Structure probing data (2A3 and DMS) for a 177-nucleotide construct. Values cover nucleotides 27 to 126. For DMS, 4,733 sequencing reads were counted. For 2A3 the reverse transcriptase was SuperScript II with manganese. The 2A3 profile rests on 5,056 reads.
RNA sequence: GGGAACGACUCGAGUAGAGUCGAAAAUUCAGAGCCUUCGGGCUCUGAACCGUUUUCCUUCUUCCCAUUAUUGGUAACUCGGUAAUAAAAGGAAAGUUGCCGCAACUUGUUCGUUCGCGAACAAGAAACUAAUAUUUACUUUCGAGUAAAUAUUAGUAAAAGAAACAACAACAACAAC
Reactivity to 2A3 in 0.01 (KOAc 150mM, MgCl2 10mM, bicine 150mM(pH8.5), 24C), signal-to-noise 4, nucleotides 027 to 126: u030u000c000a000g000a000g000c000c010u050u070c240g120g020g000c000u000c000u010g000a000a000c000c010g020u080u060u120u000c010c000u030u110c020u020u030c050c000c000a070u160u210a110u170u270g000g010u010a020a000c020u010c100g000g050u050a120a120u120a140a280a040a010g030g010a090a030a010g010u010u020g010c010c010g020c030a030a110c000u010u000g010u010u000c010g020u040u060c220g020c000g110a000a010c000a010a000g010a050a020
Reactivity to DMS in 0.01 (KOAc 150mM, MgCl2 10mM, bicine 150mM(pH8.5), 24C), signal-to-noise 4, nucleotides 027 to 126: u010u000c000a010g000a030g010c000c000u000u010c230g040g030g010c000u000c010u000g000a000a020c070c070g000u010u000u000u000c000c010u000u010c140u000u000c010c010c010a160u020u020a070u010u000g010g020u000a030a040c100u000c020g010g010u010a090a090u000a070a090a070a060g000g000a060a090a090g010u000u000g010c010c040g010c300a060a150c000u000u000g000u000u000c000g010u000u010c200g020c010g010a010a000c000a000a000g000a070a080